[RMDB]
RNA sequence: GGGAACGACUCGAGUAGAGUCGAAAACAGGUCGAUAGUACCAAUAACCCUGGUACCAAUAAGGUACUAUCGACCAUUUAGCUCUUCUUCUACAACACGCUCGCUGAAGAAGAGCAUUUCCGGUACCAGGGCAGCGAGCGCAAGGCCGAGAGGCCGACAUCAUUUAGGGUUUCGACCCUAAAUGAUGAAAAGAAACAACAACAACAAC
Reactivity to 2A3 in 0.01 (KOAc 150mM, MgCl2 10mM, bicine 150mM(pH8.5), 24C), signal-to-noise 4, nucleotides 027 to 156: c040a030g000g000u000c000g000a000u000a000g020u000a000c020c040a090a180u150a080a070c000c000c010u000g000g000u010a010c030c000a090a140u170a290a100g000g000u000a000c000u010a010u000c000g000a000c000c000a010u020u060u130a010g000c010u000c000u010u000c020u040u030c030u100a080c050a230a040c080a080c130g030c010u020c010g020c030u030g000a000a010g000a010a000g000a010g000c000a000u000u090u040c060c010g000g000u000a020c000c000a000g000g000g000c000a000g000c000g000a010g040c010g010c040a070a060g010g000c000c000g080a070g010a030g080g010c010c000g000a000
Reactivity to DMS in 0.01 (KOAc 150mM, MgCl2 10mM, bicine 150mM(pH8.5), 24C), signal-to-noise 1, nucleotides 027 to 156: c050a150g030g050u000c000g030a030u000a010g010u010a000c020c020a190a080u000a070a080c000c000c040u000g030g020u000a010c000c000a110a170u000a170a100g020g030u000a000c000u000a000u000c000g000a030c010c000a000u000u010u000a100g010c010u020c010u010u010c000u000u020c030u000a120c080a050a060c050a100c030g040c030u020c020g000c020u010g020a040a080g000a030a000g000a000g050c010a000u000u000u000c070c090g030g040u000a010c010c000a020g000g000g000c040a010g000c060g050a050g050c020g050c110a110a100g040g020c000c000g000a220g010a300g010g060c010c000g030a190
This 207-nucleotide RNA was probed chemically with 2A3 and DMS. In probing experiments dimethyl sulfate is read out at A N1 and C N3, which are open when not base-paired. DMS adducts were read by reverse transcription with MarathonRT. For 2A3 the reverse transcriptase was SuperScript II with manganese. The 2A3 profile rests on 4,596 reads.